[RMDB]
RNA sequence: GGGAACGACUCGAGUAGAGUCGAAAAUGCAAGAACAGAUUGAUGGGACGACAGCCUUUAUUAUGGUUGAUGACCUUAAUCAUCUGGUUAAAGGCGGACGCCUGUCAAAUGGGUCUGCUCUUCUUGGAAAUCUUUUGAGUAUUAAACCUAUUUUACACGCCGUUUUAUGAUUCGUCAUAAAACGGCGAAAAGAAACAACAACAACAAC
Reactivity to 2A3 in 0.01 (KOAc 150mM, MgCl2 10mM, bicine 150mM(pH8.5), 24C), signal-to-noise 1, nucleotides 027 to 156: u110g010c010a020a000g050a090a020c000a000g090a080u100u150g000a000u060g010g000g030a030c040g010a020c100a020g050c010c000u180u080u070a140u100u130a100u240g010g010u030u000g050a090u180g000a090c010c000u000u070a050a110u100c030a010u000c000u000g000g000u000u110a090a020a000g000g000c000g000g000a020c050g300c240c000u100g000u100c000a030a030a030u100g000g040g000u000c040u000g000c000u030c030u010u000c000u020u000g110g020a090a050a090u100c080u020u210u080u010g010a040g050u020a110u060u060a060a020a040c000c000u020a160u070u160u050u130a090c130a000